Conditions: 150 mM KOAc, 10 mM MgCl2 and 150 mM bicine (pH 8.5), 24 C. Structure probing data (DMS and 2A3) for a 177-nucleotide construct. As a SHAPE reagent, 2A3 marks flexible, mostly unpaired nucleotides at the ribose 2'-OH. For 2A3 the reverse transcriptase was SuperScript II with manganese. The DMS profile rests on 43,450 reads.

[RMDB]
RNA sequence: GGGAACGACUCGAGUAGAGUCGAAAAUAACGUACUUUCGAGUACGUUAAGUCUCCCGGCGCAAGCAGGGCUGAAGAGAAGAUGGAGGAGCUGGUGGUGGAAUUAGGGGGGGAUUCGUCCCCCCCAAUGUGAUACUAAUAUUCGUAUUAGUAUCACAAAAAGAAACAACAACAACAAC
Reactivity to DMS in 0.01 (KOAc 150mM, MgCl2 10mM, bicine 150mM(pH8.5), 24C), signal-to-noise 9, nucleotides 027 to 126: u000a010a010c000g010u000a000c000u000u000u010c160g010a020g010u000a000c000g010u000u000a010a070g000u010c140u000c010c010c010g010g010c080g010c110a070a090g010c060a060g000g000g000c070u000g010a090a070g000a100g010a070a070g000a060u010g010g010a080g000g000a070g010c060u000g010g010u000g010g020u000g000g010a080a080u010u010a110g010g010g000g010g010g010g000a030u000u010c160g010u000c000c000c000c000c000c000c000a000a010
Reactivity to 2A3 in 0.01 (KOAc 150mM, MgCl2 10mM, bicine 150mM(pH8.5), 24C), signal-to-noise 6, nucleotides 027 to 126: u030a010a000c000g010u000a010c000u050u060u100c200g010a000g010u000a000c010g000u000u000a000a010g050u000c020u010c060c010c010g030g020c040g000c030a060a050g030c010a040g060g030g000c030u060g030a100a010g040a030g020a120a020g030a050u090g020g030a050g010g000a030g040c050u030g020g060u050g030g040u040g010g090a140a140u140u100a300g000g000g000g010g000g000g010a000u020u040c120g050u010c020c010c000c000c010c000c000a000a000